This 207-nucleotide RNA was probed chemically with 2A3. For 2A3, 978 sequencing reads were counted. It was measured as part of the RMDB library M2RFOK. The RNA was probed in 150 mM KOAc, 10 mM MgCl2 and 150 mM bicine (pH 8.5) at 24 C.
RNA sequence: GGGAACGACUCGAGUAGAGUCGAAAAACUGACGGUACGCCGUCAGAACGGUAGAAAAGAUGGUUUGAAAACCACGCCUUCUACCAAUAUAGUAAAUAAAUAGGCCGAGCGGUCAUACGUGACCGCAAAAACAUCCUUGGCUUCGGCCAAGGAUGAACGUAGUGUCGAACUUCGGUUCGACACUACGAAAAGAAACAACAACAACAAC
Reactivity to 2A3 in 0.01 (KOAc 150mM, MgCl2 10mM, bicine 150mM(pH8.5), 24C), signal-to-noise 2, nucleotides 027 to 156: a000c010u000g000a000c000g000g000u040a020c270g020c030c000g010u030c010a000g000a070a000c030g000g010u000a000g000a010a000a000a000g050a270u000g010g050u010u120u270g090a090a100a000a000c000c000a000c000g000c000c000u000u000c000u000a000c000c000a010a010u170a030u080a060g090u050a000a050a080u040a020a090a060u070a040g000g000c000c020g010a020g000c000g030g000u000c000a000u000a190c150g050u020g000a000c000c000g030c000a010a000a010a010a010c000a000u000c000c000u000u000g000g000c000u030u000c150g110g010c000c000a000a000g000g000a000u000g000a000a000